[RMDB]
This 207-nucleotide RNA was probed chemically with 2A3 and DMS.
RNA sequence: GGGAACGACUCGAGUAGAGUCGAAAACGUGUCACCGCCCACGGCAAACCCGCACAGUUCAGCUUCCACGCCAGAUUCAUUUCCCUGUGAGCAUGCUUCCCUGGCCAAAGUCAUCUCCGCAUGCUGUGGAUGACAGGGAUGUGGCAUGCAUUAGAAACGUUUUAAAUGAUUUCGAUCAUUUAAAACGAAAAGAAACAACAACAACAAC
Reactivity to 2A3 in 0.01 (KOAc 150mM, MgCl2 10mM, bicine 150mM(pH8.5), 24C), signal-to-noise 5, nucleotides 027 to 156: c030g030u030g040u070c030a040c100c030g020c020c020c010a050c030g000g000c110a090a050a110c030c020c020g050c020a050c030a030g040u080u090c020a020g000c020u070u010c020c010a070c030g010c010c020a050g020a120u080u080c040a040u060u040u080c000c000c000u080g050u040g090a020g000c010a010u020g010c000u060u030c010c000c000u010g060g000c030c030a090a100a030g090u150c020a020u020c060u040c090c050g070c040a030u110g020c050u040g040u040g030g010a020u050g060a050c020a000g000g010g020a030u070g070u090g090g000c000a000u010g000c010a010u030u050a040g060a030a070a010
Reactivity to DMS in 0.01 (KOAc 150mM, MgCl2 10mM, bicine 150mM(pH8.5), 24C), signal-to-noise 3, nucleotides 027 to 156: c070g020u010g000u010c020a120c030c040g030c020c020c020a150c080g000g020c030a070a060a100c040c010c020g000c040a110c060a080g020u000u000c020a110g010c020u010u000c020c020a070c020g000c020c010a100g000a140u000u000c060a100u000u000u000c000c010c000u020g030u000g010a150g020c020a040u000g010c020u000u010c020c010c000u000g010g000c030c020a050a040a090g000u000c010a020u000c070u010c050c070g020c010a060u010g050c040u010g040u000g010g020a130u010g010a060c010a020g010g010g010a120u000g020u000g020g020c000a040u000g010c010a140u000u010a110g000a110a080a190
Conditions: 150 mM KOAc, 10 mM MgCl2 and 150 mM bicine (pH 8.5), 24 C.